[RMDB]
Annotation
An RNA of 207 nucleotides, treated with 2A3 and DMS and read out base by base. High 2A3 reactivity points to a flexible backbone, as in loops and unpaired stretches. The 2A3 profile rests on 3,549 reads. For DMS the reverse transcriptase was MarathonRT. Conditions: 150 mM KOAc, 10 mM MgCl2 and 150 mM bicine (pH 8.5), 24 C. The DMS profile rests on 5,853 reads.
RNA sequence: GGGAACGACUCGAGUAGAGUCGAAAAUAAAUGGCAGAUACUGACGAUAUUAUCGAUUAUGAGUCCGAAGAUGAUAUGAGUGAAUAUGAAGAAGAUGAGGAUGAUGAAGAUAAUGAAACAAAAUCAUUAGAAAGUAGUGAUGUUAUUUCACUUAAACGCCACUAUAUAGUUUCGACUAUAUAGUGGCAAAAGAAACAACAACAACAAC
Reactivity to 2A3 in 0.01 (KOAc 150mM, MgCl2 10mM, bicine 150mM(pH8.5), 24C), signal-to-noise 5, nucleotides 027 to 156: u110a010a070a060u060g040g000c060a050g020a060u030a070c040u070g030a010c040g010a020u030a070u180u080a090u150c060g010a010u020u080a090u220g020a020g050u040c080c090g020a020a010g010a010u030g020a010u030a040u220g050a050g020u000g000a030a010u060a020u110g020a030a040g010a020a000g010a000u020g040a040g060g010a010u030g000a000u010g010a010a000g020a020u030a040a050u050g030a040a050a020c040a000a060a020a060u050c010a020u060u110a040g090a110a070a020g050u060a010g030u020g030a030u030g070u120u070a100u020u080u020c010a010c000u110u200a180a020a000c220
Reactivity to DMS in 0.01 (KOAc 150mM, MgCl2 10mM, bicine 150mM(pH8.5), 24C), signal-to-noise 3, nucleotides 027 to 156: u000a060a100a110u000g030g000c040a090g050a080u000a050c110u000g020a080c030g030a060u000a050u020u000a100u000c050g020a110u000u010a110u000g010a130g030u010c090c040g000a080a100g020a070u010g010a140u000a070u000g000a130g030u000g020a070a090u000a060u000g000a070a110g000a100a080g000a070u010g010a060g020g010a050u000g000a040u000g000a060a080g020a050u000a050a030u010g000a030a010a070c030a010a040a050a080u000c000a030u000u000a060g000a100a130a200g030u000a050g010u010g010a040u000g000u000u000a000u000u010u000c000a020c060u000u010a080a090a110c140